[RMDB]
RNA sequence: GGGAACGACUCGAGUAGAGUCGAAAAGAUAUGGAGUAGAAGAGCUUUUGACGCUUUAAUGAUCGGAAACGAUCAGUAAGCGAUAAGCUCCUACUCCUAAGUCAAAGUGCAAACUUCGGUUUGCACACAACCUGAAUAUCUUCGGAUAUUCAGGUUGAAAAGAAACAACAACAACAAC
Reactivity to DMS in 0.01 (KOAc 150mM, MgCl2 10mM, bicine 150mM(pH8.5), 24C), signal-to-noise 7, nucleotides 027 to 126: g010a030u000a290u010g000g000a010g010u000a000g000a180a160g010a020g020c000u000u000u010u010g020a240c080g010c000u010u000u000a080a070u000g000a010u000c000g000g010a070a050a120c000g020a010u000c000a010g000u010a020a010g020c000g020a100u010a010a020g010c000u000c000c000u000a000c010u000c000c000u000a000a050g000u000c040a120a140a170g020u000g010c000a000a010a010c000u000u020c260g040g000u000u000u000g000c010a000c010a090
Reactivity to 2A3 in 0.01 (KOAc 150mM, MgCl2 10mM, bicine 150mM(pH8.5), 24C), signal-to-noise 5, nucleotides 027 to 126: g010a000u030a020u110g020g000a000g010u020a010g060a300a060g010a050g010c040u090u160u240u300g300a200c100g000c000u030u040u080a250a260u140g010a000u000c000g010g000a020a030a030c010g000a000u000c010a020g020u030a010a000g000c020g130a170u080a250a000g000c000u000c000c000u000a000c000u000c000c000u000a030a000g000u000c040a090a110a100g000u000g000c000a010a010a010c000u040u040c110g150g010u000u000u020g000c000a000c000a000
An RNA of 177 nucleotides, treated with DMS and 2A3 and read out base by base. It was measured as part of the RMDB library TTRDES. As a SHAPE reagent, 2A3 marks flexible, mostly unpaired nucleotides at the ribose 2'-OH. Values cover nucleotides 27 to 126. For 2A3, 16,708 sequencing reads were counted. Conditions: 150 mM KOAc, 10 mM MgCl2 and 150 mM bicine (pH 8.5), 24 C.